[RMDB]
The record gives the reactivity of an RNA of 177 nucleotides to 2A3 and DMS.
The reactions ran in a buffer of 150 mM KOAc, 10 mM MgCl2 and 150 mM bicine (pH 8.5), at 24 C.
Reactivities are given for positions 27 through 126.
RNA sequence: GGGAACGACUCGAGUAGAGUCGAAAACGGGAGGCCUCUGAAGCUGCAGCUGGAGGGGCCGGGGCAGUGUUGCAUGGUGUGAUUAACCUACUAACCCAGGGCUCAGCCGGGACGCUGUGGCGUGUGAGCGAUGUCCUGACUUCGGUCAGGACGUCGCAAAAGAAACAACAACAACAAC
Reactivity to 2A3 in 0.01 (KOAc 150mM, MgCl2 10mM, bicine 150mM(pH8.5), 24C), signal-to-noise 3, nucleotides 027 to 126: c050g020g000g040a040g070g000c030c000u060c040u080g080a070a020g010c030u050g010c020a020g000c020u160g020g020a020g000g010g000g000c000c000g000g000g000g000c040a050g020u040g070u280u130g110c190a160u140g000g020u040g040u060g080a180u240u100a050a020c000c010u020a020c060u030a050a100c000c020c030a060g030g070g030c010u020c000a010g000c020c020g030g080g010a020c050g000c020u040g010u010g020g000c030g000u090g030u040g060a030
Reactivity to DMS in 0.01 (KOAc 150mM, MgCl2 10mM, bicine 150mM(pH8.5), 24C), signal-to-noise 3, nucleotides 027 to 126: c070g000g000g000a090g020g000c010c010u030c030u010g010a080a110g000c050u000g020c070a060g000c020u000g000g010a070g000g000g000g020c040c030g010g000g010g020c210a030g020u000g010u020u030g010c160a100u030g000g030u020g000u030g000a160u040u040a130a070c030c000u000a050c040u000a210a150c020c030c030a100g010g010g000c020u010c020a120g030c000c000g000g000g030a100c140g030c010u030g030u000g020g010c030g020u010g000u020g020a140

It was measured as part of the RMDB library OK1LIB.